[RMDB]
RNA sequence: GGGAACGACUCGAGUAGAGUCGAAAAAUGCUGUUCUUCCCGACGACAUUGGCGUGACACUUUCGCGGGCGAUUAUCCCGCCCAAUACGUCGGGCAUCGUCGGGCAGACGGUGAGGGAAGCCGGACUCAAAAGCGGGUCGACACUCCUCACGAGACACGAACCUCACAUAUUCGUAUGUGAGGUUCGAAAAGAAACAACAACAACAAC
Reactivity to 2A3 in 0.01 (KOAc 150mM, MgCl2 10mM, bicine 150mM(pH8.5), 24C), signal-to-noise 2, nucleotides 027 to 156: a010u150g000c060u030g020u080u010c000u060u000c030c010c000g000a000c000g000a000c010a010u110u220g050g040c080g070u120g100a040c100a070c300u210u300u280c190g030c100g020g000g000c080g040a090u030u250a040u300c030c050c050g060c000c010c110a090a120u280a000c020g000u010c030g020g100g010c060a030u000c020g000u000c000g000g000g000c000a000g000a010c000g040g000u040g050a080g010g090g050a190a020g190c150c090g010g020a020c000u000c120a120a160a040a010g160c060g000g040g000u000c010g000a060c010a030c030u010c020c000u030c000a010c070g030a010g010a070c070a000